[RMDB]
RNA sequence: GGGAACGACUCGAGUAGAGUCGAAAACAGGACGCCGUUCGCAGCGAGGCGGCCGCCCACGGCGAGCUGGCGCCCAUCCGGGCCUCCAUCGGGAAGCAUCUGCAGCAUGUGGCGGCGUGCUUUGGGGGAGCUAUGUAUGUUUCGACAUACAUAGCUCAAAAGAAACAACAACAACAAC
Reactivity to 2A3 in 0.01 (KOAc 150mM, MgCl2 10mM, bicine 150mM(pH8.5), 24C), signal-to-noise 3, nucleotides 027 to 126: c060a010g040g050a010c000g000c030c000g020u150u190c020g000c040a040g080c030g040a040g080g000c030g040g050c030c120g000c000c000c010a060c060g030g010c050g020a090g030c040u110g070g000c010g000c000c000c000a040u070c030c040g040g000g000c030c020u030c040c000a070u120c050g000g020g040a040a010g020c000a040u050c020u210g010c010a040g020c020a130u120g040u100g120g000c000g010g000c010g010u040g030c020u040u080u060g010g010g000g020
Reactivity to DMS in 0.01 (KOAc 150mM, MgCl2 10mM, bicine 150mM(pH8.5), 24C), signal-to-noise 3, nucleotides 027 to 126: c170a110g010g000a020c000g010c000c010g030u010u010c020g020c000a040g020c030g000a170g010g010c010g000g030c160c240g000c010c010c050a100c080g010g020c010g000a060g030c010u000g030g010c240g000c020c010c000a090u020c090c070g020g000g000c010c020u000c020c010a100u000c100g000g010g010a070a090g010c030a030u000c050u000g000c040a140g010c050a130u020g030u000g010g000c010g000g020c070g020u000g000c020u000u000u000g010g010g010g000